[RMDB]
RNA sequence: GGGAACGACUCGAGUAGAGUCGAAAAAGAGCCUGAUACGUCCGGCUCAACGGGGGAUACGUGUGGUGCCGUCCGCUCCCCCUAUGGCAUAACAAAUGCACCACACACUAGGCUACGGCCUAGUGAAAAAAGGUGUAUGUGUUCGCACAUACACCAAGGUACGCAUUUACUUCGGUAAAUGCGUACCAAAAGAAACAACAACAACAAC
Reactivity to 2A3 in 0.01 (KOAc 150mM, MgCl2 10mM, bicine 150mM(pH8.5), 24C), signal-to-noise 2, nucleotides 027 to 156: a000g010a000g000c000c010u030g010a030u030a060c140g100u020c010c030g000g020c010u000c020a000a040c040g000g000g000g010g000a030u040a110c010g020u020g000u000g070g020u010g000c010c010g030u030c070c090g080c040u050c000c010c000c000c000u020a180u200g130g010c060a160u120a220a020c060a120a080a050u140g010c000a000c010c010a000c000a010c000a000c000u000a000g000g000c000u000a020c300g080g000c000c000u000a000g000u010g000a060a010a000a010a010a020g000g000u020g000u010a020u000g000u010g030u020u100c210g040c080a000c000a000u040a000c000a010c000c010a000a010

Source information
The record gives the reactivity of an RNA of 207 nucleotides to 2A3. For 2A3 the reverse transcriptase was SuperScript II with manganese. The RNA was probed in 150 mM KOAc, 10 mM MgCl2 and 150 mM bicine (pH 8.5) at 24 C.